[RMDB]
RNA sequence: GGGAACGACUCGAGUAGAGUCGAAAACGCAGAGGGUUCUGAUAACAAAGAACCUAGAUAGCCGCAUCGGUAUUAUAGGAUGUAGUCGGUGAGCCGGAAUGCCUGCAUGGUAAGCCUAUAAGUAAAUUUAAGUGUAAUCACUUCGGUGAUUACACAAUCCUCCAUGUUAGUUCGCUAACAUGGAGGAAAAAGAAACAACAACAACAAC
Reactivity to 2A3 in 0.01 (KOAc 150mM, MgCl2 10mM, bicine 150mM(pH8.5), 24C), signal-to-noise 1, nucleotides 027 to 156: c080g010c020a000g030a080g150g020g000u020u000c010u000g110a090u070a120a040c060a020a140a010g030a010a000c010c000u010a020g080a140u060a010g050c030c030g060c040a050u040c060g110g000u050a030u090u110a040u130a060g050g030a030u010g020u060a050g010u010c010g030g000u060g030a010g040c000c060g000g020a060a040u060g000c000c000u000g030c000a010u060g010g020u060a080a000g000c000c020u100a070u080a240a000g110u080a070a090a200u080u080u050a290a000g000u000g000u000a010a010u000c000a000c030u040u010c060g090g000u000g020a000u010u000a000c000a000c000a000a000
Reactivity to DMS in 0.01 (KOAc 150mM, MgCl2 10mM, bicine 150mM(pH8.5), 24C), signal-to-noise 1, nucleotides 027 to 156: c070g060c090a040g030a270g010g000g020u000u000c000u010g000a100u010a120a290c300a120a200a050g020a050a050c020c000u000a010g030a240u000a160g000c090c060g000c090a050u000c020g050g040u020a140u010u020a080u010a040g000g000a040u000g010u010a070g020u000c030g030g000u000g000a140g000c010c020g030g000a110a070u000g000c020c020u000g020c040a080u000g060g020u010a050a180g000c010c000u000a060u000a050a090g000u000a000a070a160u000u000u010a100a190g040u020g020u000a000a020u000c000a020c000u000u020c300g020g010u000g000a000u000u020a020c010a000c000a040a030